RNA sequence: GGGAACGACUCGAGUAGAGUCGAAAAACCAACCCUAUUUUCAUUCUUCGCCAAAAGCACUCUGAUUGACAAAUACGAUUUAUCUAAUUUACACGAAAUUGCUUCUGGGGGCGCACCUCUUUCGAAAGAAGUCGGGGAAGCGGUUGCAAAACGCUUCGUUCAUACAGGUGUUCGCACCUGUAUGAACAAAAGAAACAACAACAACAAC
Reactivity to 2A3 in 0.01 (KOAc 150mM, MgCl2 10mM, bicine 150mM(pH8.5), 24C), signal-to-noise 1, nucleotides 027 to 156: a000c040c020a030a060c000c020c020u060a140u080u100u040u050c030a060u000u040c000u060u000c020g050c040c050a080a020a000a060g050c050a040c030u100c050u050g090a120u110u050g030a050c000a040a070a110u160a050c090g070a050u030u070u120a060u080c040u110a000a130u090u120u170a040c090a000c070g030a070a130a090u060u100g050c000u020u040c060u040g000g000g010g010g040c050g000c000a020c000c010u070c070u020u110u210c000g050a070a030a040g010a030a000g090u100c070g010g000g000g050a000a000g020c040g010g050u090u130g000c040a080a080a000a000c040g010c010u020u020c050
Chemical mapping of a 207-nucleotide RNA with 2A3. The 2A3 profile rests on 403 reads.